[RMDB]
RNA sequence: GGGAACGACUCGAGUAGAGUCGAAAAAUCCUCGAGUACUGGCCUACGAUCGAGGAUCUGCGCAGACGGUACGGCGCAGAGAGCGCGGCCUCGGCCCUAGCGUACGUACGCGCGUACUCAGAGACAGGCACAAAGGGGUAUUCGUACCCCUUUGUGCAAAAGAAACAACAACAACAAC
Reactivity to DMS in 0.01 (KOAc 150mM, MgCl2 10mM, bicine 150mM(pH8.5), 24C), signal-to-noise 2, nucleotides 027 to 126: a030u000c000c000u000c010g020a050g010u010a070c010u000g000g000c090c030u000a040c080g010a140u010c020g000a050g000g000a070u010c010u030g000c020g040c020a080g000a080c070g000g030u010a060c030g010g010c000g020c030a180g010a090g000a140g020c020g010c010g000g000c010c010u000c250g060g000c010c030c080u010a130g000c010g030u000a070c030g010u000a030c080g020c010g010c040g010u000a080c090u000c030a150g000a200g020a090c060a080g000
Reactivity to 2A3 in 0.01 (KOAc 150mM, MgCl2 10mM, bicine 150mM(pH8.5), 24C), signal-to-noise 1, nucleotides 027 to 126: a000u020c010c030u020c000g010a000g040u020a130c140u120g120g050c060c030u020a070c030g090a110u050c010g000a020g000g000a030u010c000u090g000c050g000c020a040g050a120c040g120g070u070a040c040g030g020c020g000c010a000g060a020g000a040g150c030g000c010g050g070c000c000u050c070g100g010c000c040c000u070a020g000c010g020u020a030c020g030u030a010c060g030c000g000c010g030u040a030c020u000c080a010g040a020g030a090c020a040g110
An RNA of 177 nucleotides, treated with DMS and 2A3 and read out base by base. For DMS the reverse transcriptase was MarathonRT.